[RMDB]
Notes:
This 177-nucleotide RNA was probed chemically with DMS. The data come from the RNA Mapping Database (RMDB), library TTRDES.
RNA sequence: GGGAACGACUCGAGUAGAGUCGAAAAGAUAUGGACCGUCCGUUGCUCAACAGCCUUAGUCGGAAACGACUAAGGACAUGAGCGACGGCGGUCCUAAGUCAAAGCUACUUAGUUCGCUAAGUAGCAACUAGGACACGAAGUUCGCUUCGUGUCCUAGAAAAGAAACAACAACAACAAC
Reactivity to DMS in 0.01 (KOAc 150mM, MgCl2 10mM, bicine 150mM(pH8.5), 24C), signal-to-noise 2, nucleotides 027 to 126: g010a030u000a300u000g010g000a000c010c020g000u010c000c040g010u000u010g070c000u010c010a020a100c300a260g000c010c000u000u000a000g020u000c000g030g000a090a060a170c030g000a060c000u000a010a000g000g010a000c040a140u020g000a010g000c000g000a000c000g000g000c000g020g020u000c000c000u000a000a100g000u000c070a110a060a140g000c000u020a010c000u000u000a000g000u000u030c300g030c000u000a000a020g000u000a000g020c010a030a020